Structure probing data (2A3 and DMS) for a 177-nucleotide construct. The RNA was probed in 150 mM KOAc, 10 mM MgCl2 and 150 mM bicine (pH 8.5) at 24 C. For DMS, 858 sequencing reads were counted.

[RMDB]
RNA sequence: GGGAACGACUCGAGUAGAGUCGAAAAAGAAUCCUAAGGUGUUCGAGAGAACUCUCGUUAAGGAACUCGGCAAAAUGACCCCGUAACUUCGGGAGAAGGGGUGCUUUUUAGGGUGAAUAGCCCGGAAGGAUGUGUCUUAGUUCGCUAAGACACAUCCAAAAGAAACAACAACAACAAC
Reactivity to 2A3 in 0.01 (KOAc 150mM, MgCl2 10mM, bicine 150mM(pH8.5), 24C), signal-to-noise 1, nucleotides 027 to 126: a000g060a020a020u030c000c000u020a020a000g000g040u050g000u050u140c010g000a020g000a020g030a120a070c000u040c030u050c070g140u110u080a110a030g000g010a060a060c020u000c000g020g000c090a000a070a060a190u140g060a070c000c010c000c010g050u010a020a070c040u040u080c180g160g000g000a000g000a000a000g020g030g000g010u010g030c010u050u170u030u040u060a090g000g030g010u050g090a090a060u100a210g030c000c000c020g020g050a070a020
Reactivity to DMS in 0.01 (KOAc 150mM, MgCl2 10mM, bicine 150mM(pH8.5), 24C), signal-to-noise 1, nucleotides 027 to 126: a040g010a190a060u000c010c000u020a070a040g000g010u000g010u000u010c000g000a130g000a200g010a110a040c030u000c020u030c120g010u000u010a110a020g010g000a140a160c000u010c010g020g010c040a060a080a080a080u030g010a130c020c010c010c000g000u010a160a100c020u000u000c130g000g010g010a060g000a090a140g000g010g010g010u010g010c030u030u000u000u000u000a060g000g000g000u000g000a160a070u000a100g060c020c000c000g030g000a100a130